[RMDB]
RNA sequence: GGGAACGACUCGAGUAGAGUCGAAAAGUUCGACUGUUUUUGGCUCAACGUAACAGUGUCCUGAAACUGUUCGAAGGGAAAUUUUAUGGGAGCGCUGAACAGGACCUGUGUCAUCGAACAUGUUGCAGUCCGUAAAAUCAUUCGUGAUUUUACGGACAAAAGAAACAACAACAACAAC
Reactivity to DMS in 0.01 (KOAc 150mM, MgCl2 10mM, bicine 150mM(pH8.5), 24C), signal-to-noise 2, nucleotides 027 to 126: g010u000u000c020g000a280c040u010g000u000u000u030u000u000g010g010c050u000c010a110a120c070g010u010a080a060c130a060g000u000g020u010c030c040u000g000a110a080a100c080u020g010u010u010c080g030a150a250g000g000g000a020a070a090u000u000u000u000a070u000g020g010g010a030g000c020g000c050u020g000a030a050c000a000g010g000a090c010c010u000g010u020g000u000c120a080u000c070g010a020a030c050a140u020g000u010u000g020c180a150